Structure probing data (2A3 and DMS) for a 207-nucleotide construct. 2A3 adducts were read by reverse transcription with SuperScript II with manganese. The RNA was probed in 150 mM KOAc, 10 mM MgCl2 and 150 mM bicine (pH 8.5) at 24 C.

[RMDB]
RNA sequence: GGGAACGACUCGAGUAGAGUCGAAAAGUGUAUAGGCAAACCGACCCUCCGCCUAUACACGAAUUAAGGAGGGCGGAGAUCUUAUGCUCGCGAUCUUACGUCACGAGCGAUGGCCUGCGGCUCGUGACGCAUCUUACGCAGGCCAUAGCGAGCUACAAUGAUAUUACGCAUUCGUGCGUAAUAUCAUAAAAGAAACAACAACAACAAC
Reactivity to 2A3 in 0.01 (KOAc 150mM, MgCl2 10mM, bicine 150mM(pH8.5), 24C), signal-to-noise 4, nucleotides 027 to 156: g030u020g000u010a010u000a000g000g010c040a060a100a090c040c020g240a300c030c000c000u040c030c030g000c000c000u000a000u000a000c000a000c000g020a010a050u190u120a110a030g030g000a000g000g010g000c010g040g020a030g000a010u000c010u090u170a080u230g000c000u000c000g000c000g000a020u010c010u070u190a070c010g000u000c010a000c000g000a000g010c060g000a010u030g010g000c000c000u010g000c000g050g000c000u000c000g000u000g000a010c000g000c010a100u080c030u130u120a040c030g000c010a000g000g000c000c000a000u010a000g000c000g010a010g000c000u030a050c100a100
Reactivity to DMS in 0.01 (KOAc 150mM, MgCl2 10mM, bicine 150mM(pH8.5), 24C), signal-to-noise 2, nucleotides 027 to 156: g020u000g000u000a020u010a010g010g050c020a030a070a060c050c030g020a130c020c000c000u000c010c010g000c010c010u000a000u010a000c010a000c010g020a030a040u000u000a110a140g010g020a100g100g020g020c000g010g000a140g010a100u000c040u000u010a120u010g010c020u010c000g030c050g010a060u010c030u000u010a080c070g010u020c010a020c000g000a030g040c000g000a060u010g040g040c050c050u020g030c000g000g000c040u000c010g000u000g020a100c030g050c030a010u000c090u010u000a090c030g040c010a050g000g040c030c020a020u000a050g010c030g000a060g030c030u010a070c090a120